[RMDB]
RNA sequence: GGGAACGACUCGAGUAGAGUCGAAAAAUAUAUCCAGCCUCAUGUGAUGACAAUUUGUAAGCUUGCUAGAAUAAGGGGGAGCUUCGCUUAUCCAUGCGGCAACUAUCUUCAGCCCAGAUGCCGCAUUAUUGAGCUGGACAUUCGUGUCCAGCUCAAUAAAAGAAACAACAACAACAAC
Reactivity to 2A3 in 0.01 (KOAc 150mM, MgCl2 10mM, bicine 150mM(pH8.5), 24C), signal-to-noise 2, nucleotides 027 to 126: a000u240a010u060a000u050c060c070a000g060c000c000u070c060a040u050g090u170g060a040u020g020a040c050a090a180u110u010u070g120u100a020a000g000c000u050u090g040c080u050a010g020a150a060u180a210a060g120g000g000g000g010a020g010c000u080u080c010g000c070u010u000a010u070c060c010a010u020g000c000g000g010c010a000a000c050u050a060u020c020u040u080c070a000g080c010c000c000a000g040a040u040g000c000c010g000c030a000u000u010
Reactivity to DMS in 0.01 (KOAc 150mM, MgCl2 10mM, bicine 150mM(pH8.5), 24C), signal-to-noise 1, nucleotides 027 to 126: a030u060a110u010a250u000c040c100a100g000c070c000u000c000a010u030g020u020g010a090u000g020a000c160a070a030u020u070u080g000u000a050a070g000c000u000u010g000c000u030a070g020a030a170u020a160a110g000g050g010g000g010a000g000c050u010u000c030g000c180u000u020a010u020c030c060a040u040g000c020g000g010c010a060a050c200u030a060u030c100u030u000c200a080g000c000c000c010a110g000a110u050g000c050c010g010c030a000u000u000